Annotation: Structure probing data (2A3 and DMS) for a 177-nucleotide construct. Conditions: 150 mM KOAc, 10 mM MgCl2 and 150 mM bicine (pH 8.5), 24 C.

[RMDB]
RNA sequence: GGGAACGACUCGAGUAGAGUCGAAAAUGGGCAAAAACUGUCGCCGUAUGAUGCAGCCUGUGCAGGCUGUGUCGCGCACGGUGCGGCAGCUGACGUACUGGCGGCGCGUUUUGGAACGCGCGGGAUAGCAUCCCUCAUCAUUCGUGAUGAGGGAUGCAAAAGAAACAACAACAACAAC
Reactivity to 2A3 in 0.01 (KOAc 150mM, MgCl2 10mM, bicine 150mM(pH8.5), 24C), signal-to-noise 2, nucleotides 027 to 126: u030g020g000g040c020a040a000a010a070a080c010u010g010u040c000g010c000c000g000u000a060u210g020a000u000g000c010a010g000c010c000u190g130u290g260c140a000g000g000c000u000g000u000g000u020c000g010c050g040c010a030c030g090g090u170g050c000g020g000c030a000g000c030u040g010a010c030g030u130a100c060u110g090g000c070g000g000c010g020c010g030u010u000u110u130g170g090a070a000c000g000c020g000c000g020g030g010a070u090a030
Reactivity to DMS in 0.01 (KOAc 150mM, MgCl2 10mM, bicine 150mM(pH8.5), 24C), signal-to-noise 3, nucleotides 027 to 126: u010g020g000g000c130a110a110a100a070a030c000u000g020u000c010g000c000c010g020u010a110u010g000a020u000g000c000a020g010c010c000u000g030u020g020c270a010g020g010c000u000g020u010g020u000c030g010c260g020c190a040c020g000g060u050g030c040g000g000c020a030g010c050u000g010a200c230g010u000a070c120u010g000g000c130g020g030c010g000c030g010u000u000u010u030g010g010a070a010c010g010c010g030c000g030g000g000a110u010a100
Values cover nucleotides 27 to 126. For 2A3, 2,508 sequencing reads were counted.